[RMDB]
RNA sequence: GGGAACGACUCGAGUAGAGUCGAAAACAAGGACGUUUCGACGUCCUUGAUAGGACCGCCCUUUUGGGCUAAGGCCAUACGGACAGCCGGGUCCUCUGCCGAACGCAAACCCCUUCGGGGGUUUGAAUCUACUAUACGAUUUCGAUCGUAUAGUAGAAAAAGAAACAACAACAACAAC
Reactivity to DMS in 0.01 (KOAc 150mM, MgCl2 10mM, bicine 150mM(pH8.5), 24C), signal-to-noise 6, nucleotides 027 to 126: c010a000a000g010g010a010c000g010u000u000u010c140g020a040c010g010u000c000c000u000u000g000a070u000a050g000g010a020c000c010g020c000c000c010u000u000u010u010g030g010g010c000u010a030a030g010g020c010c010a090u000a090c050g000g000a030c040a170g000c000c010g000g010g000u000c000c000u000c230u010g000c010c010g000a300a110c230g000c010a010a010a010c000c000c000c000u000u010c260g030g020g010g000g000u000u000u000g000a060a110
Reactivity to 2A3 in 0.01 (KOAc 150mM, MgCl2 10mM, bicine 150mM(pH8.5), 24C), signal-to-noise 4, nucleotides 027 to 126: c010a000a000g000g000a010c010g000u020u060u170c200g090a010c000g000u020c000c000u000u000g000a010u020a010g000g000a010c010c000g030c020c000c000u130u140u190u300g040g010g000c110u120a140a120g010g000c000c000a030u050a050c010g010g020a020c020a020g000c020c000g040g000g000u000c000c000u020c010u040g030c000c010g080a120a020c060g000c060a010a020a020c000c000c010c050u030u110c210g090g000g010g000g000u000u010u000g000a000a000

An RNA of 177 nucleotides, treated with DMS and 2A3 and read out base by base. 2A3 adducts were read by reverse transcription with SuperScript II with manganese. For 2A3, 8,624 sequencing reads were counted.